[RMDB]
RNA sequence: GGGAACGACUCGAGUAGAGUCGAAAAACAGGUGCGGACUGAUACGUCAGUCCGCACCUGAGGUGCUUGCUAUUUCACCUAAAUCGAAAUAGCACUGGCAGUCCACCUUACGAGGUGGCCUGCCAGAAAAAGCAACCGAAGUUCGCUUCGGUUGCAAGAUAGCAUAGAUCUUCGGAUCUAUGCUAUCAAAAGAAACAACAACAACAAC
Reactivity to 2A3 in 0.01 (KOAc 150mM, MgCl2 10mM, bicine 150mM(pH8.5), 24C), signal-to-noise 1, nucleotides 027 to 156: a000c010a000g000g000u040g040c000g050g030a000c000u020g010a030u090a100c220g070u010c000a030g000u000c030c000g010c090a010c000c000u000g000a000g010g000u010g000c060u040u030g010c000u000a000u000u000u010c000a000c020c030u080a090a070a020u100c080g000a000a000a000u000a000g010c000a000c000u000g000g000c000a000g010u010c000c000a010c000c000u070u050a100c270g090a010g000g020u000g010g000c000c000u000g080c000c000a000g030a010a030a000a000a000g000c000a000a000c000c000g020a000a000g020u040u270c280g000c140u000u010c000g000g000u010u000g000c000a000a000
Chemical mapping of a 207-nucleotide RNA with 2A3. Source: RMDB library M2RFPK, as collected in RNAgym. The reactions ran in a buffer of 150 mM KOAc, 10 mM MgCl2 and 150 mM bicine (pH 8.5), at 24 C. For 2A3 the reverse transcriptase was SuperScript II with manganese.